[RMDB]
RNA sequence: GGGAACGACUCGAGUAGAGUCGAAAAGAUAUGGAUAAUAGCUUUUGACGCCAGGUUGUCGGAAACGACAAUACUGGCGAUAAGCUAGUCCUAAGUCAAAAGACGUCGAAGUUCGCUUCGACGUCAAGCCCAUUACGGAGUUCGCUCCGUAAUGGGCAAAAGAAACAACAACAACAAC
Reactivity to DMS in 0.01 (KOAc 150mM, MgCl2 10mM, bicine 150mM(pH8.5), 24C), signal-to-noise 1, nucleotides 027 to 126: g000a020u040a300u010g000g000a000u000a170a140u000a010g000c000u000u000u000u010g000a230c040g000c000c020a000g000g000u000u000g010u020c000g010g000a110a070a130c000g000a010c010a010a000u000a080c000u000g000g000c000g030a000u000a010a020g000c000u000a050g000u000c000c000u010a040a160g010u010c010a080a040a110a100g000a000c010g000u000c000g040a000a010g000u000u030c220g010c000u000u000c000g010a000c000g000u000c000a000a030
Reactivity to 2A3 in 0.01 (KOAc 150mM, MgCl2 10mM, bicine 150mM(pH8.5), 24C), signal-to-noise 1, nucleotides 027 to 126: g000a010u080a020u170g000g010a040u050a300a000u020a260g000c040u080u090u130u260g180a140c260g030c010c000a000g000g000u020u000g000u030c000g010g050a010a060a100c010g000a000c020a000a010u270a300c000u000g130g040c000g000a000u000a000a010g030c010u000a010g010u000c000c000u000a140a030g040u040c020a000a000a030a300g000a010c000g000u010c020g010a000a010g010u030u170c250g070c160u010u000c010g030a040c050g000u000c000a010a000

Description:
This 177-nucleotide RNA was probed chemically with DMS and 2A3. It was measured as part of the RMDB library TTRDEL. Values cover nucleotides 27 to 126.